[RMDB]
RNA sequence: GGGAACGACUCGAGUAGAGUCGAAAAUGCUGUCGAUCAGGGCAUUACCGCUCUUGGUAACCAGUUGCAGGUUCAUGCACUGGCCUUCCCGGAUCUGCGCACUGAGGGCCUCAUACUGAUCCUGGAGGGUCGUUCUUCUAUUCGUAGAAGAACGACCAAAAGAAACAACAACAACAAC
Reactivity to 2A3 in 0.01 (KOAc 150mM, MgCl2 10mM, bicine 150mM(pH8.5), 24C), signal-to-noise 1, nucleotides 027 to 126: u000g030c000u020g050u120c040g020a010u030c000a050g010g000g030c010a020u000u060a050c010c040g000c020u020c000u060u090g030g030u080a100a080c030c010a030g020u090u090g060c030a010g010g080u190u180c030a060u190g010c020a010c070u050g000g030c030c020u090u000c030c030c000g000g000a050u020c020u070g030c060g030c020a030c050u030g030a070g000g030g010c040c010u090c020a090u150a180c040u030g000a020u020c060c010u100g050g040a110g210
Reactivity to DMS in 0.01 (KOAc 150mM, MgCl2 10mM, bicine 150mM(pH8.5), 24C), signal-to-noise 2, nucleotides 027 to 126: u000g010c000u000g000u000c170g000a110u000c060a040g040g020g000c070a030u000u000a170c110c080g000c060u000c100u020u000g020g010u010a070a160c110c040a050g000u000u000g020c050a040g020g000u000u020c230a070u000g020c070a010c030u000g000g000c050c070u000u000c000c010c020g020g010a070u000c060u030g010c090g020c090a050c060u000g000a090g000g000g000c050c040u020c150a050u020a140c010u000g000a050u000c000c020u000g030g030a160g000
An RNA of 177 nucleotides, treated with 2A3 and DMS and read out base by base. The 2A3 profile rests on 1,278 reads. 2A3 adducts were read by reverse transcription with SuperScript II with manganese. It was measured as part of the RMDB library OK2TRN. For DMS, 1,144 sequencing reads were counted.